[RMDB]
RNA sequence: GGGAACGACUCGAGUAGAGUCGAAAAGAAAGAAAUCAAAGCGGAUUUCACUAAUCGGAGAUCUACGAAUAACUCGUAGUGAGUGAUCCAAUAUCCGUAUUAGAUGUAACUGAGCAAUGAGUAGAAAGGGAAACAAUGAGUUCGCUCAUUGUUUCCCAAAAGAAACAACAACAACAAC
Reactivity to 2A3 in 0.01 (KOAc 150mM, MgCl2 10mM, bicine 150mM(pH8.5), 24C), signal-to-noise 2, nucleotides 027 to 126: g090a000a030a000g040a030a070a000u010c040a100a000a090g010c000g010g040a060u000u040u050c020a000c030u050a020a000u040c000g020g030a020g000a000u020c000u020a000c000g090a060a030u280a300a100c110u000c000g030u000a000g030u040g000a010g020u080g070a020u050c010c000a110a040u170a030u120c000c000g090u150a000u000u050a050g060a090u000g000u140a000a110c050u040g010a000g080c030a100a120u060g030a020g120u150a080g110a070a240a000
Reactivity to DMS in 0.01 (KOAc 150mM, MgCl2 10mM, bicine 150mM(pH8.5), 24C), signal-to-noise 2, nucleotides 027 to 126: g010a070a070a120g010a050a090a050u000c000a080a070a300g000c020g040g020a070u030u020u000c020a120c010u000a000a050u000c060g030g010a070g010a070u000c020u000a030c070g010a080a140u030a060a220c270u000c010g010u010a120g000u030g000a110g000u040g000a130u070c100c150a080a000u000a140u000c010c000g000u050a000u010u000a000g000a100u000g000u020a020a040c070u000g000a270g000c050a080a050u000g010a040g000u030a050g000a030a060a060
Chemical mapping of a 177-nucleotide RNA with 2A3 and DMS. The 2A3 profile rests on 1,162 reads. For 2A3 the reverse transcriptase was SuperScript II with manganese. The RNA was probed in 150 mM KOAc, 10 mM MgCl2 and 150 mM bicine (pH 8.5) at 24 C. Reactivities are rounded to 0.1 and cut off at 0 and 3. DMS adducts were read by reverse transcription with MarathonRT.